[RMDB]
RNA sequence: GGGAACGACUCGAGUAGAGUCGAAAAACAGUCAUUUUACGAGACAAUCCUACCUGCGUGGAUUGUUAACUGCAUCAUUAAUGGGACAAGUGAAGAGAGAAAGUCCGAGUCCACGUGGAGAGCCGUGGUCCAUGAGUGGAUUCGUCCACUCAUGGACAAAAGAAACAACAACAACAAC
Reactivity to 2A3 in 0.01 (KOAc 150mM, MgCl2 10mM, bicine 150mM(pH8.5), 24C), signal-to-noise 2, nucleotides 027 to 126: a010c010a020g090u060c070a100u000u080u230u200a070c100g030a030g010a120c040a010a030u000c030c030u070a100c010c000u080g030c030g010u010g030g000a000u040u040g060u040u030a050a040c010u080g030c000a040u020c010a030u070u250a100a050u180g060g010g030a010c010a060a090g090u150g280a220a030g180a020g010a000g070a180a090a000g040u030c000c020g010a020g000u000c000c000a000c020g020u030g020g090a120g020a000g120c050c000g050u070g080
Reactivity to DMS in 0.01 (KOAc 150mM, MgCl2 10mM, bicine 150mM(pH8.5), 24C), signal-to-noise 2, nucleotides 027 to 126: a150c060a090g010u010c060a100u000u000u000u000a090c190g020a160g020a020c020a060a060u000c020c000u010a120c100c070u000g040c080g020u000g010g000a030u000u010g000u000u000a040a130c060u000g000c100a100u000c120a050u000u020a070a020u000g020g000g000a020c070a040a120g040u000g010a060a050g000a170g000a060g000a110a090a090g000u000c040c060g020a130g010u000c000c030a020c010g010u000g000g020a160g000a050g030c060c050g060u000g010
An RNA of 177 nucleotides, treated with 2A3 and DMS and read out base by base. The 2A3 profile rests on 1,551 reads. The reactions ran in a buffer of 150 mM KOAc, 10 mM MgCl2 and 150 mM bicine (pH 8.5), at 24 C. The DMS profile rests on 1,218 reads.